[RMDB]
RNA sequence: GGGAACGACUCGAGUAGAGUCGAAAAAAAACAAACAUUAUAUGGGAAUCGAUGUUAUUAUCAAAGUCACAAAGCAAGACCAAACACCGACCAAUGAUAAGAUUUGCCAAUCCGUAACGGAAAUUACACCAUUGGUGUGAUUCGUCACACCAAUGGUAAAAGAAACAACAACAACAAC
Reactivity to 2A3 in 0.01 (KOAc 150mM, MgCl2 10mM, bicine 150mM(pH8.5), 24C), signal-to-noise 2, nucleotides 027 to 126: a000a000a000a000c090a060a030a030c080a070u150u100a040u080a110u140g140g000g060a070a080u050c050g010a020u030g020u070u040a110u140u020a040u130c040a060a070a000g030u030c030a020c000a090a110a020g000c010a110a090g020a020c000c000a040a070a000c000a030c000c060g000a060c000c000a040a060u050g030a010u040a090a040g030a070u020u000u130g050c030c050a020a070u000c010c030g080u060a050a010c090g040g010a010a130a000u090u050a090c070
Reactivity to DMS in 0.01 (KOAc 150mM, MgCl2 10mM, bicine 150mM(pH8.5), 24C), signal-to-noise 2, nucleotides 027 to 126: a040a040a040a040c090a020a030a060c070a010u000u010a090u000a120u000g000g030g000a140a090u010c050g000a060u000g010u000u000a130u040u010a110u020c080a030a100a080g030u010c030a040c100a050a040a050g010c140a080a050g000a070c020c050a060a070a050c060a050c090c020g060a050c050c020a030a040u000g030a010u010a020a050g010a130u000u000u000g010c040c020a050a060u000c060c010g000u020a050a080c120g020g000a060a040a070u000u000a110c170
This 177-nucleotide RNA was probed chemically with 2A3 and DMS. The DMS profile rests on 1,329 reads. For 2A3, 1,338 sequencing reads were counted. Source: RMDB library OK2TST, as collected in RNAgym. The reactions ran in a buffer of 150 mM KOAc, 10 mM MgCl2 and 150 mM bicine (pH 8.5), at 24 C. As a SHAPE reagent, 2A3 marks flexible, mostly unpaired nucleotides at the ribose 2'-OH.